[RMDB]
RNA sequence: GGGAACGACUCGAGUAGAGUCGAAAAGAUAUGGAAUUAAUCUCACGGGAGCUUGGGCCUCGGAAACGAGGUAGAGCGAAGAACGUGAGAGUUAAUUCCUAAGUCAAAAGCUACGUUCGCGUAGCAAGUUAGUCAAUUUCUUCGGAAAUUGACUAACAAAAGAAACAACAACAACAAC
Reactivity to DMS in 0.01 (KOAc 150mM, MgCl2 10mM, bicine 150mM(pH8.5), 24C), signal-to-noise 2, nucleotides 027 to 126: g010a040u010a300u020g000g000a000a000u000u020a000a010u000c010u010c000a010c010g000g000g010a080g050c000u010u000g000g020g020c000c000u000c000g020g000a100a090a170c000g010a020g000g000u000a300g000a060g020c050g000a090a090g000a120a190c000g000u000g000a010g010a040g010u010u000a000a000u000u000c000c010u000a020a090g010u010c080a220a080a080a170g000c000u020a000c000g000u000u000c280g020c040g000u010a000g000c020a090a080
Reactivity to 2A3 in 0.01 (KOAc 150mM, MgCl2 10mM, bicine 150mM(pH8.5), 24C), signal-to-noise 1, nucleotides 027 to 126: g030a020u110a030u180g010g000a000a030u000u000a000a020u030c000u010c000a000c030g000g030g020a050g000c000u070u040g130g300g030c000c020u000c000g010g000a110a060a030c020g010a010g000g000u020a030g010a000g040c050g060a150a070g040a000a000c000g010u000g030a020g000a000g000u000u000a010a000u000u000c020c000u020a110a000g030u030c010a010a000a000a250g020c000u000a000c000g030u050u130c300g000c010g110u000a000g010c000a010a000
Source: RMDB library TTRDES, as collected in RNAgym. This 177-nucleotide RNA was probed chemically with DMS and 2A3. 2A3 is a SHAPE reagent: it acylates the 2'-hydroxyl of flexible nucleotides of all four kinds. The DMS profile rests on 1,505 reads. Conditions: 150 mM KOAc, 10 mM MgCl2 and 150 mM bicine (pH 8.5), 24 C.